[RMDB]
RNA sequence: GGGAACGACUCGAGUAGAGUCGAAAAGCCAUGCAGGUGUUUUGCGACACGUGUCCGCGGUACUUAGUGCCCUUGCGCGCGCUGGGACUAAACGACGAGGUACGCGCCUACAAGCAGCCGCGGCCUCUGGAGCCCACCAAGAUCGUCAUGUAUGGGCACAAUCCUGUCGUUUCGACGACAGGAUUGUAAAAGAAACAACAACAACAAC
Reactivity to 2A3 in 0.01 (KOAc 150mM, MgCl2 10mM, bicine 150mM(pH8.5), 24C), signal-to-noise 1, nucleotides 027 to 156: g020c000c030a010u050g050c010a000g000g000u010g070u090u250u270u120g100c080g000a010c050a030c100g050u090g000u070c020c000g000c080g010g000u040a130c070u090u130a010g000u090g110c000c020c000u130u170g060c050g030c000g050c020g020c020u050g000g070g000a060c050u140a160a120a000c090g110a030c030g050a030g070g080u280a300c090g050c010g030c090c000u210a150c060a260a000g070c050a010g000c090c020g000c020g020g020c000c010u010c000u020g030g040a090g000c000c000c000a020c000c010a090a020g010a200u190c040g110u010c020a010u060g020u050a060u110g070g000g010c030